[RMDB]
RNA sequence: GGGAACGACUCGAGUAGAGUCGAAAAGUUGAGAGCGUUUAACUUAAGUCUUUUUUAUUAGCGUAAAAAAACUAUAUACAAGUGGUGGUAGUCCGCCACUCUAAGGGGACGCCUUUAGAAGAAGAGGGAAAGGCACUAAGCUUCGGCUUAGUGCCAACCAUACCUAAGUGUUCGCACUUAGGUAUGGAAAAGAAACAACAACAACAAC
Reactivity to DMS in 0.01 (KOAc 150mM, MgCl2 10mM, bicine 150mM(pH8.5), 24C), signal-to-noise 1, nucleotides 027 to 156: g010u010u000g000a110g010a120g000c060g040u000u010u010a120a110c040u000u010a050a180g010u000c000u000u030u000u000u000u030a060u020u020a170g010c110g000u010a010a010a080a060a030a000a100c020u000a110u010a200u000a110c100a020a020g020u020g010g010u000g010g030u000a210g000u010c030c000g040c010c000a030c020u000c000u000a080a040g010g010g020g000a060c090g000c000c010u000u000u000a060g020a060a060g020a040a040g000a040g020g010g010a070a020a110g020g030c020a010c000u010a000a020g080c010u000u010c300g050g000c000u000u000a010g030u030g020c000c000a000a000
Reactivity to 2A3 in 0.01 (KOAc 150mM, MgCl2 10mM, bicine 150mM(pH8.5), 24C), signal-to-noise 4, nucleotides 027 to 156: g040u050u090g050a060g000a030g030c030g010u080u080u100a130a080c030u080u110a110a020g020u060c030u000u100u050u020u020u020a050u070u090a080g020c010g000u060a020a030a000a030a000a000a010c130u140a160u040a030u030a300c040a090a020g010u000g010g000u010g040g010u060a070g160u060c020c000g000c000c010a010c000u010c000u010a020a020g010g000g010g000a000c010g040c000c020u040u120u090a030g010a100a000g030a050a020g040a060g010g040g030a010a110a170g020g010c000a000c000u000a010a000g000c000u020u080c270g030g000c000u000u020a000g000u000g000c000c000a000a000

Chemical mapping of a 207-nucleotide RNA with DMS and 2A3. For DMS, 2,617 sequencing reads were counted. The RNA was probed in 150 mM KOAc, 10 mM MgCl2 and 150 mM bicine (pH 8.5) at 24 C.